[RMDB]
RNA sequence: GGGAACGACUCGAGUAGAGUCGAAAAGGGAAUUACUCCUACUAAUCGCCCGUAAGACUUGUGGAUCAGUAGAACAACAAUUAAAUAUAACUGCACCCAAGGACUCGCGCUUAGCAAAUCCAACGGCGGACUGCAACGGUUUCGACCGUUGCAGUCCAAAAGAAACAACAACAACAAC
Reactivity to 2A3 in 0.01 (KOAc 150mM, MgCl2 10mM, bicine 150mM(pH8.5), 24C), signal-to-noise 2, nucleotides 027 to 126: g050g000g050a040a040u100u000a130c130u100c000c000u000a030c000u000a000a140u000c020g050c110c000c000g040u050a070a070g020a010c000u030u040g090u240g180g080a130u100c080a010g040u090a000g060a260a000c050a060a000c000a000a100u200u300a140a260a090u150a010u010a260a000c040u020g050c130a020c000c000c010a030a030g030g010a070c000u000c060g100c040g010c040u000u090a050g000c000a000a000a190u000c000c040a110a000c010g160g000c040